Source: RMDB library TTRDES, as collected in RNAgym. Structure probing data (DMS and 2A3) for a 177-nucleotide construct. Conditions: 150 mM KOAc, 10 mM MgCl2 and 150 mM bicine (pH 8.5), 24 C. For DMS, 2,349 sequencing reads were counted.

[RMDB]
RNA sequence: GGGAACGACUCGAGUAGAGUCGAAAAGAUAUGGAUAAUGCAUGAGGACGUUGAAAGGAGCUCGGAAACGAGCUCCUGGAGUCCCAUGUAAUUUAUCCUAAGUCAAACCUUUGCUUCGGCAAAGGAACACUGAAGGAAAGUUCGCUUUCCUUCAGUGAAAAGAAACAACAACAACAAC
Reactivity to DMS in 0.01 (KOAc 150mM, MgCl2 10mM, bicine 150mM(pH8.5), 24C), signal-to-noise 2, nucleotides 027 to 126: g000a030u000a220u000g000g000a000u010a030a090u010g000c030a000u000g000a240g040g010a010c010g060u010u000g000a220a110a020g000g000a010g050c000u000c000g010g010a060a080a110c000g000a020g030c000u010c000c000u000g050g010a030g030u000c000c000c000a010u000g000u000a050a070u010u010u000a010u000c000c000u000a020a160g020u000c020a130a130a220c000c000u000u000u000g000c000u010u010c240g030g000c000a000a010a020g000g010a110a110
Reactivity to 2A3 in 0.01 (KOAc 150mM, MgCl2 10mM, bicine 150mM(pH8.5), 24C), signal-to-noise 1, nucleotides 027 to 126: g000a000u060a020u130g000g000a000u020a090a130u240g020c000a000u000g040a300g250g010a010c020g220u300u020g000a020a030a000g000g020a010g020c000u000c000g000g040a020a040a030c000g010a030g010c000u000c000c010u000g000g000a000g010u010c000c010c000a010u010g000u000a000a040u060u140u060a010u000c000c000u050a060a000g030u020c040a100a070a280c010c010u000u030u000g000c010u060u050c300g180g000c000a020a000a000g000g010a000a020